[RMDB]
Structure probing data (DMS and 2A3) for a 177-nucleotide construct.
RNA sequence: GGGAACGACUCGAGUAGAGUCGAAAAUGCCAGUGGCUUCACUUCUGACAGCAAACGUCAGUUUGCAAGUGUUGGUGCUGAAUUUAACGCAUGGAAAUGGGCGCAAUUGCGUGCCGGUUAUCGUCAGUCGAGAUACUAGCUUCGGCUAGUAUCUCGAAAAAGAAACAACAACAACAAC
Reactivity to DMS in 0.01 (KOAc 150mM, MgCl2 10mM, bicine 150mM(pH8.5), 24C), signal-to-noise 2, nucleotides 027 to 126: u000g000c100c000a060g010u000g010g000c030u000u000c020a040c020u000u030c090u000g020a070c100a230g000c040a020a020a040c010g000u010c300a100g000u010u000u020g010c030a030a000g030u000g010u000u000g000g000u000g000c030u010g000a150a110u000u000u000a090a080c140g020c050a060u000g000g000a070a110a100u000g010g000g020c040g000c020a180a120u010u010g000c070g040u000g000c010c000g000g000u000u010a090u000c060g000u010c060a100g000
Reactivity to 2A3 in 0.01 (KOAc 150mM, MgCl2 10mM, bicine 150mM(pH8.5), 24C), signal-to-noise 2, nucleotides 027 to 126: u080g040c020c020a000g020u010g080g140c020u000u020c000a030c040u060u120c050u060g070a030c040a010g030c020a040a000a040c020g070u050c080a030g000u000u000u100g020c010a010a060g010u040g030u060u020g120g290u040g040c060u010g000a000a000u070u060u130a110a030c050g000c030a030u010g020g120a050a000a130u070g070g030g000c030g040c040a060a280u290u180g000c030g000u020g180c020c020g000g020u070u090a180u110c080g050u050c030a040g050

The RNA was probed in 150 mM KOAc, 10 mM MgCl2 and 150 mM bicine (pH 8.5) at 24 C. 2A3 adducts were read by reverse transcription with SuperScript II with manganese. Source: RMDB library OK2TST, as collected in RNAgym.